[RMDB]
RNA sequence: GGGAACGACUCGAGUAGAGUCGAAAACUACGCUGGUGGCGUGGUAUCCAAAGGCUUGGUUAACCGACGCACUGCUGACCAGAAGCUAUGCCUGGAGGACUUAUGAAAGAUAUCUGGAAACGUGUAGCUCAUGCCCUGUAUUCGUACAGGGCAUGAGAAAAGAAACAACAACAACAAC
Reactivity to DMS in 0.01 (KOAc 150mM, MgCl2 10mM, bicine 150mM(pH8.5), 24C), signal-to-noise 3, nucleotides 027 to 126: c000u030a040c080g010c020u000g010g030u010g000g030c010g030u000g000g000u000a090u000c030c030a060a140a150g010g010c110u010u000g010g010u000u000a130a110c040c040g000a140c140g010c030a100c060u000g020c060u010g030a160c040c060a110g010a100a120g000c020u000a030u010g010c020c030u000g010g000a140g010g010a080c110u000u010a040u010g000a090a110a070g020a090u000a080u000c020u000g000g000a050a080a080c140g000u000g000u000a080g020
Reactivity to 2A3 in 0.01 (KOAc 150mM, MgCl2 10mM, bicine 150mM(pH8.5), 24C), signal-to-noise 2, nucleotides 027 to 126: c000u040a030c010g060c030u090g060g170u100g110g020c000g000u000g010g020u010a020u020c000c000a000a060a040g190g020c070u050u060g000g070u060u020a090a070c000c020g100a010c030g000c010a010c040u040g020c020u000g050a050c030c000a010g040a070a000g020c030u070a050u120g010c000c040u030g000g060a050g040g000a030c000u110u120a100u160g150a060a050a010g070a050u080a060u150c000u060g010g000a100a060a040c030g040u050g020u110a030g010

Source: RMDB library OK2TST, as collected in RNAgym. An RNA of 177 nucleotides, treated with DMS and 2A3 and read out base by base. The reactions ran in a buffer of 150 mM KOAc, 10 mM MgCl2 and 150 mM bicine (pH 8.5), at 24 C. The DMS profile rests on 2,003 reads. DMS adducts were read by reverse transcription with MarathonRT.